[RMDB]
RNA sequence: GGGAACGACUCGAGUAGAGUCGAAAAUAGGCAGAGCGGGGUGCCUCGAGGUGCGGGACGCCGACCCCGGAGGCCUCCUUUGAGUCGAUGGGGCGGCUUCAUUAAGCGGCGCUAACAAGGCGAACAAAAUAACGCUUAUGUUCGCAUAAGCGUUAUUAAAAGAAACAACAACAACAAC
Reactivity to DMS in 0.01 (KOAc 150mM, MgCl2 10mM, bicine 150mM(pH8.5), 24C), signal-to-noise 8, nucleotides 027 to 126: u030a050g000g000c040a040g000a120g000c040g020g000g000g030u020g020c030c030u010c060g010a130g010g020u010g010c030g010g000g010a060c090g000c010c000g000a140c020c010c010c010g000g010a300g020g000c030c020u000c230c210u000u030u020g000a100g030u000c010g000a300u060g000g000g000g010c030g010g000c010u000u000c060a080u020u030a090a090g020c060g000g010c030g010c050u000a060a100c250a070a130g000g010c020g010a060a070c160a070a070
Reactivity to 2A3 in 0.01 (KOAc 150mM, MgCl2 10mM, bicine 150mM(pH8.5), 24C), signal-to-noise 7, nucleotides 027 to 126: u160a020g020g010c030a020g010a030g060c030g000g020g010g040u070g010c010c000u030c030g040a040g020g020u070g050c040g020g040g010a030c030g000c000c010g260a300c030c000c000c010g010g000a010g000g010c000c010u110c020c030u090u120u180g060a060g010u010c010g010a010u050g000g000g010g000c000g000g000c000u030u020c010a040u010u050a070a040g080c040g040g000c000g000c010u020a050a040c040a060a040g030g010c020g030a030a010c020a030a160